[RMDB]
RNA sequence: GGGAACGACUCGAGUAGAGUCGAAAAGUGACGACGGCCUGAUCAAUGCGAUUGACGGCCCGGAUAAUUCGUUGCUGGUUCCGGCUGGCACCAGUUUUUCCGCCGCGAUCGUGUCCGGGGUGGCUGCGGAUGCGUGAACAUUCGUGUUCACGCAUCCAAAAGAAACAACAACAACAAC
Reactivity to 2A3 in 0.01 (KOAc 150mM, MgCl2 10mM, bicine 150mM(pH8.5), 24C), signal-to-noise 1, nucleotides 027 to 126: g030u040g110a050c080g010a010c030g040g040c010c020u060g010a080u040c070a060a070u100g040c000g050a030u020u020g080a210c050g070g000c000c050c000g000g000a030u030a070a060u120u070c070g010u050u100g010c020u030g010g000u040u040c050c140g120g040c120u110g010g000c030a010c050c040a060g000u000u030u020u080u020c020c020g000c000c000g000c000g010a050u030c000g010u020g030u090c030c090g040g010g040g050u060g000g000c070u000g010c020
Reactivity to DMS in 0.01 (KOAc 150mM, MgCl2 10mM, bicine 150mM(pH8.5), 24C), signal-to-noise 2, nucleotides 027 to 126: g020u010g000a100c050g000a150c080g000g030c020c000u000g030a130u000c110a170a060u000g010c070g000a080u000u010g020a070c020g030g000c050c160c030g030g010a020u010a050a090u000u010c140g020u000u000g020c010u000g020g010u000u000c120c160g000g000c030u010g000g000c040a010c010c030a050g010u000u000u000u000u000c000c020g010c020c010g010c020g010a010u000c030g000u000g020u010c080c080g010g020g010g010u000g000g020c020u000g010c170